Source: RMDB library RFM100, as collected in RNAgym. Chemical mapping of a 177-nucleotide RNA with 2A3.
[RMDB]
RNA sequence: GGGAACGACUCGAGUAGAGUCGAAAAGCAGACACUAGGACCAUGUCUUGGUUUUUGCAAUAAUGCUAGCAGAGUACACACAAGAAGAAAAGUAACAGCACUAGAUUGUAAAGACUGGGGUGGACCUAGCCAACACCUACUUCGGUAGGUGUUGGCUAAAAGAAACAACAACAACAAC
Reactivity to 2A3 in 0.01 (KOAc 150mM, MgCl2 10mM, bicine 150mM(pH8.5), 24C), signal-to-noise 1, nucleotides 027 to 126: g090c050a000g000a140c000a010c060u000a000g000g020a020c000c000a090u010g200u060c000u050u150g020g020u000u000u000u040u000g000c000a010a000u090a090a000u220g020c050u040a020g020c000a000g070a060g150u090a000c060a000c000a000c000a250a000g130a000a000g090a000a230a000a000g000u070a190a000c000a040g000c000a000c030u040a060g010a160u030u060g060u000a000a000a000g000a020c000u000g000g000g000g000u000g000g040a000c000c030u000
Source information: Values cover nucleotides 27 to 126. 2A3 adducts were read by reverse transcription with SuperScript II with manganese.